[RMDB]
RNA sequence: GGGAACGACUCGAGUAGAGUCGAAAAUUUGCAGAUAAUCGGCAAAGAUCGCAUUACCGGAGAGAUAGGCGAUGAAGCCGAACGAAGCGGCAGCCACCAUCACCGGCACGAUGGCAAGGCCGUCGAACGAUACUCGUGAUUUCGAUCACGAGUAUCGAAAAGAAACAACAACAACAAC
Reactivity to DMS in 0.01 (KOAc 150mM, MgCl2 10mM, bicine 150mM(pH8.5), 24C), signal-to-noise 3, nucleotides 027 to 126: u010u000u010g010c120a130g010a140u010a090a120u000c000g010g010c000a030a180a190g010a050u000c020g000c000a090u000u000a060c020c050g000g010a140g000a140g020a050u010a000g000g010c000g010a010u010g000a190a210g000c000c020g020a020a040c150g000a120a110g000c030g030g000c010a060g010c000c000a100c010c000a010u010c020a160c090c050g010g020c130a050c220g000a010u000g000g020c070a100a070g000g010c000c020g020u000c020g010a080a140
Reactivity to 2A3 in 0.01 (KOAc 150mM, MgCl2 10mM, bicine 150mM(pH8.5), 24C), signal-to-noise 2, nucleotides 027 to 126: u070u030u110g030c020a000g060a170u140a150a120u110c010g010g000c030a050a060a090g170a060u000c010g000c060a060u020u100a060c010c050g080g070a170g000a000g000a090u090a060g060g000c010g000a020u020g020a090a020g000c020c000g000a020a010c030g030a070a020g070c000g020g000c020a000g020c020c010a090c050c000a020u010c010a020c050c030g090g000c060a020c070g000a000u010g020g000c080a120a140g030g000c000c020g000u030c010g000a050a010